An RNA of 177 nucleotides, treated with DMS and 2A3 and read out base by base. The 2A3 profile rests on 2,715 reads. As a SHAPE reagent, 2A3 marks flexible, mostly unpaired nucleotides at the ribose 2'-OH. For DMS, 2,093 sequencing reads were counted. Source: RMDB library TTRDES, as collected in RNAgym.
RNA sequence: GGGAACGACUCGAGUAGAGUCGAAAAGAUAUGGAGGUGAAGAAGCGAUAAGCUGGAUUCGGAAACGAAUCCCAGCUUUUGACGCUUCCACCUCCUAAGUCAAAAGCUCGCCCUUCGGGGCGAGCAACAGAAUAUACGACUUCGGUCGUAUAUUCUGAAAAGAAACAACAACAACAAC
Reactivity to DMS in 0.01 (KOAc 150mM, MgCl2 10mM, bicine 150mM(pH8.5), 24C), signal-to-noise 2, nucleotides 027 to 126: g000a030u000a120u010g000g000a000g000g010u010g000a290a210g010a000a010g040c000g020a100u020a000a020g020c000u000g000g000a020u000u000c000g010g010a030a010a040c000g010a010a010u020c160c110c090a010g000c010u000u000u000u020g010a250c090g020c010u000u010c000c000a010c000c000u010c000c000u000a000a060g000u000c000a110a130a130a190g040c000u000c000g020c000c000c000u000u000c240g040g000g020g040c010g020a010g000c010a010a040
Reactivity to 2A3 in 0.01 (KOAc 150mM, MgCl2 10mM, bicine 150mM(pH8.5), 24C), signal-to-noise 2, nucleotides 027 to 126: g010a000u030a020u070g000g030a030g000g000u030g060a300a300g010a000a020g160c030g120a280u060a300a000g000c030u010g000g010a010u000u000c010g000g000a020a020a010c000g000a010a010u030c030c010c000a000g000c040u000u010u050u130g100a040c010g030c000u000u030c020c010a020c000c000u000c010c010u000a000a000g000u000c010a000a000a050a180g020c000u000c010g020c000c000c030u020u080c300g090g010g020g000c000g000a010g000c010a020a000